[RMDB]
RNA sequence: GGGAACGACUCGAGUAGAGUCGAAAAAAAGCGGUGCCGUCCUUUAAUGCCAGGUGUCCUGCAGCCCAACAGGCUAUUAAAGAGGGGGAAGUGAGCUGUGUGUAGCGACAGGAUUCUGAAAGAGUGCCGUUUAGUGAGCUUUCGAGCUCACUAAACGAAAAGAAACAACAACAACAAC
Reactivity to DMS in 0.01 (KOAc 150mM, MgCl2 10mM, bicine 150mM(pH8.5), 24C), signal-to-noise 2, nucleotides 027 to 126: a030a120a050g030c040g010g000u020g000c010c020g000u000c030c010u000u000u010a070a070u030g030c060c030a080g010g020u000g010u000c020c010u000g000c080a160g000c000c030c040a140a150c130a070g000g000c070u000a050u000u000a040a070a080g010a120g000g000g000g010g000a060a050g010u000g020a090g000c010u000g010u000g020u010g000u000a050g010c050g000a110c070a090g000g000a060u000u000c070u000g000a080a040a070g030a100g000u000g010c090